Source information: Conditions: 150 mM KOAc, 10 mM MgCl2 and 150 mM bicine (pH 8.5), 24 C. Chemical mapping of a 207-nucleotide RNA with 2A3 and DMS. The data come from the RNA Mapping Database (RMDB), library M2RFPK. For 2A3, 1,077 sequencing reads were counted. For 2A3 the reverse transcriptase was SuperScript II with manganese.

RNA sequence: GGGAACGACUCGAGUAGAGUCGAAAACUGCGCUGAGCCCUUCUCCCCCAGCUUGCCCGUGUCCUAGGGAAUUGGAAGGUCAUCCUUCACAGGAUCGUGUGGAAGUCCUGCUCGGGGCGGAAGCAUUAUAAACCUUAGACGUUCGCGUCUAAGGUAAGAAAAUAUUUCGUUUCGACGAAAUAUUUUCAAAAGAAACAACAACAACAAC
Reactivity to 2A3 in 0.01 (KOAc 150mM, MgCl2 10mM, bicine 150mM(pH8.5), 24C), signal-to-noise 2, nucleotides 027 to 156: c000u060g030c030g030c060u080g080a030g050c050c020c020u150u080c080u100c040c040c000c000c000a010g000c010u030u090g060c010c000c010g030u040g010u000c010c030u070a070g010g080g120a100a110u200u040g110g020a020a030g000g030u100c080a110u300c020c000u080u070c020a020c020a100g070g000a050u080c050g020u030g000u070g120g020a000a040g040u040c000c010u030g050c040u000c080g010g000g020g000c000g000g030a020a000g010c020a000u060u110a080u160a070a080a020c000c020u000u000a000g000a000c000g000u010u010c130g050c010g110u020c000u010a000a000g000g000u000a000a000
Reactivity to DMS in 0.01 (KOAc 150mM, MgCl2 10mM, bicine 150mM(pH8.5), 24C), signal-to-noise 2, nucleotides 027 to 156: c040u000g000c010g020c020u000g030a170g010c030c030c030u000u000c030u000c030c000c010c010c010a140g000c020u000u000g030c030c020c040g010u000g000u000c040c000u000a190g010g010g000a060a150u000u000g010g000a050a050g010g000u000c130a140u000c020c020u000u010c130a120c080a050g020g030a050u000c070g030u000g020u000g000g010a170a110g000u000c020c010u000g000c060u000c080g000g020g010g040c030g000g000a190a140g010c040a090u000u000a080u000a070a090a060c020c000u000u000a000g010a010c000g000u000u010c300g060c030g040u000c000u000a000a000g000g020u000a000a050